[RMDB]
RNA sequence: GGGAACGACUCGAGUAGAGUCGAAAAGAUAUGGAGGAGGAACUACGAAGUGUGCUUCGACGAAGUCGGAAACGACAGAGAAGCACGCUUCGCCUCCUCCUAAGUCAAACGUAGGUUCGCCUACGAAGGUCUUGUUCUAGUUCGCUAGAACAAGACCAAAAGAAACAACAACAACAAC
Reactivity to DMS in 0.01 (KOAc 150mM, MgCl2 10mM, bicine 150mM(pH8.5), 24C), signal-to-noise 2, nucleotides 027 to 126: g000a080u000a300u000g000g000a000g000g030a000g010g000a130a060c110u010a300c000g020a000a000g020u000g020u000g000c000u000u010c010g000a170c300g000a030a090g030u010c020g000g010a060a070a120c010g010a020c020a070g000a150g010a060a010g000c000a010c000g000c000u000u000c000g000c010c000u020c000c000u000c000c000u020a000a040g000u010c030a020a090a150c020g000u000a000g010g020u010u010c220g030c000c000u000a020c010g030a020a060
Reactivity to 2A3 in 0.01 (KOAc 150mM, MgCl2 10mM, bicine 150mM(pH8.5), 24C), signal-to-noise 2, nucleotides 027 to 126: g070a010u100a010u150g030g000a010g010g000a020g030g010a120a080c190u190a040c300g000a010a000g010u000g020u010g000c000u020u030c000g300a300c080g080a140a020g000u010c000g010g050a050a090a070c020g050a020c000a010g020a000g000a020a000g000c000a000c010g000c000u010u020c000g000c000c000u020c000c020u010c010c020u000a000a030g000u010c000a000a040a040c030g000u000a010g000g040u040u050c300g170c070c010u000a000c020g030a050a100